RNA sequence: GGGAACGACUCGAGUAGAGUCGAAAACUCAUCGGUGACGAUGAGAGCCAAUCUUCGGAUUGGCACUAGGACGUGAGUCCUAGAGUCAUACUUCGGUAUGACACGGUCACUACGGUGACCGAGUGAAUUCGUGAGAAUUCACAAGCUAGGCUUCGGCCUAGCAAGGACAGAGUAGGUAAACGUGCGUAAAGUGCCUGAGGGACGGGGAGUUGUCCUCAGGACGAACACCGAAAGGUGGCGGUACGUUUACCGCAUCUCGCUGUUCUAAUGACAGGUUCGCCUGUCAUAAAAGAAACAACAACAACAAC
Reactivity to DMS in 0.01 (KOAc 150mM, MgCl2 10mM, bicine 150mM(pH8.5), 24C), signal-to-noise 9, nucleotides 027 to 266: c000u000c000a000u000c000g000g010u020g000a180c000g010a010u000g000a010g000a140g020c000c000a000a010u000c000u000u020c200g010g010a010u000u000g000g010c000a040c020u000a000g000g010a020c010g000u030g000a240g010u000c000c000u000a010g000a300g010u000c000a010u000a010c000u000u030c180g030g010u000a000u000g000a010c010a210c020g000g010u000c000a010c000u000a120c190g040g010u000g000a010c000c000g020a060g010u000g000a010a010u000u000c000g000u020g000a160g000a020a010u000u000c000a010c000a150a100g000c010u000a000g000g000c000u000u020c220g020g000c000c000u000a000g010c010a060a020g000g000a010c000a020g000a010g000u000a100g000g010u000a000a010a010c000g010u000g010c000g000u000a110a020a020g000u000g000c000c000u000g010a020g020g000g000a010c020g010g000g000g000a040g000u010u010g000u000c000c000u000c000a010g000g000a090c160g000a010a020c000a010c000c000g000a100a090a150g000g010u000g000g000c000g000g010u000a000c020g000u000u000u000a000c010c010g000c030a070u000c000u000c000g000c010u000g000u000u000c000u000a140
Reactivity to 2A3 in 0.01 (KOAc 150mM, MgCl2 10mM, bicine 150mM(pH8.5), 24C), signal-to-noise 9, nucleotides 027 to 266: c000u000c000a000u000c000g040g030u120g070a060c020g000a010u000g000a010g000a000g000c000c000a000a000u000c010u040u070c230g110g000a000u000u000g000g000c000a010c000u000a000g000g000a020c040g120u160g120a040g010u000c000c000u000a010g020a050g020u000c000a000u000a000c010u030u060c230g090g000u000a000u000g000a000c010a010c070g000g000u000c000a000c010u040a030c260g120g000u000g000a000c000c000g000a010g000u000g000a000a000u000u000c010g000u050g060a070g000a020a000u000u000c000a000c000a000a010g000c000u000a000g000g010c000u040u050c260g060g000c000c000u000a000g000c020a010a020g000g000a000c000a000g000a000g000u010a000g000g000u000a000a000a000c000g000u000g000c000g000u010a030a010a010g000u010g010c000c000u020g020a090g060g140g040a010c000g000g060g010g000a030g030u240u210g000u160c000c000u000c000a000g000g000a000c000g000a000a000c000a000c000c010g050a070a030a020g010g000u000g000g000c010g010g010u000a000c000g000u000u000u000a000c000c000g000c000a010u000c000u000c010g000c000u000g000u010u010c020u090a110
Chemical mapping of a 307-nucleotide RNA with DMS and 2A3. Values are in units of 0.01, from 0 to 300, in steps of 10. The data come from the RNA Mapping Database (RMDB), library POS240. The DMS profile rests on 88,456 reads. As a SHAPE reagent, 2A3 marks flexible, mostly unpaired nucleotides at the ribose 2'-OH. Conditions: 150 mM KOAc, 10 mM MgCl2 and 150 mM bicine (pH 8.5), 24 C.